[RMDB]
RNA sequence: GGGAACGACUCGAGUAGAGUCGAAAACAGUCUGGAACAGGGUGUGGAUUCAAGAAAACCCAUGGAUGGAAGACAAAACUCCAGUGGAAUCAUGGGAGGAAAUCCCAUACUUGGGGAAAAGAGAAGAGCAUUAAAUAAACUUCGGUUUAUUUAAUGCAAAAGAAACAACAACAACAAC
Reactivity to 2A3 in 0.01 (KOAc 150mM, MgCl2 10mM, bicine 150mM(pH8.5), 24C), signal-to-noise 8, nucleotides 027 to 126: c030a030g120u050c020u070g040g040a080a040c050a060g040g000g010u040g030u050g040g040a060u030u050c060a090a050g110a110a100a040a040c010c010c000a020u020g010g010a020u010g000g060a070a050g060a030c090a050a150a020a030c010u000c000c020a060g030u080g100g150a090a030u210c040a030u030g030g000g000a020g010g020a060a040a040u030c020c000c010a000u050a090c020u020u020g010g000g020g020a010a070a050a030g140a010g030a130a010g030a030
Reactivity to DMS in 0.01 (KOAc 150mM, MgCl2 10mM, bicine 150mM(pH8.5), 24C), signal-to-noise 7, nucleotides 027 to 126: c070a070g010u020c020u010g000g010a120a080c070a060g000g000g020u010g010u010g000g010a130u000u010c090a070a110g010a100a090a110a130c020c010c000a010u000g000g020a050u010g000g000a080a040g020a090c150a060a060a110a200c050u000c010c010a060g010u020g010g010a160a100u050c040a010u010g000g000g000a030g010g020a080a100a070u000c020c010c010a020u000a020c030u010u000g010g000g000g000a060a080a080a070g000a120g000a100a070g030a180

Structure probing data (2A3 and DMS) for a 177-nucleotide construct. Values are in units of 0.01, from 0 to 300, in steps of 10. 2A3 adducts were read by reverse transcription with SuperScript II with manganese. High 2A3 reactivity points to a flexible backbone, as in loops and unpaired stretches. Reactivities are given for positions 27 through 126. For 2A3, 11,461 sequencing reads were counted. The reactions ran in a buffer of 150 mM KOAc, 10 mM MgCl2 and 150 mM bicine (pH 8.5), at 24 C.